[RMDB]
RNA sequence: GGGAACGACUCGAGUAGAGUCGAAAAUGCAUUUCGAUGCAGGACGUGGGGUCGAUCUCCUUUCCGUUGAUCUGUGAACUACUUCUGAAGCCUCCACGGAAGCACAGGGAGGAAAGCGAGAUCGACGGAGGCACCCUAUUGACGGUUUCGACCGUAAUCGAAUCCUGUGUUUCGACACAGGAUUCGAAAAAGAAACAACAACAACAAC
Reactivity to 2A3 in 0.01 (KOAc 150mM, MgCl2 10mM, bicine 150mM(pH8.5), 24C), signal-to-noise 1, nucleotides 027 to 156: u040g000c000a040u060u090u160c270g130a010u000g030c040a030g130g060a080c170g070u200g000g000g000g000u000c000g000a000u000c000u000c000c000u040u000u020c000c000g070u070u010g000a000u020c000u000g010u000g000a070a080c040u100a060c000u300u000c000u040g030a010a040g100c010c120u080c000c100a010c020g000g000a010a000g000c000a000c000a050g000g000g010a010g000g090a000a000a000g070c120g000a000g010a000u000c000g000a010c000g010g000a000g010g000c000a030c000c000c000u000a040u080u220g110a000c000g090g000u040u240u180c120g030a040c000c020g040u020a140a000
Structure probing data (2A3) for a 207-nucleotide construct. It was measured as part of the RMDB library RNAMAK. 2A3 is a SHAPE reagent: it acylates the 2'-hydroxyl of flexible nucleotides of all four kinds.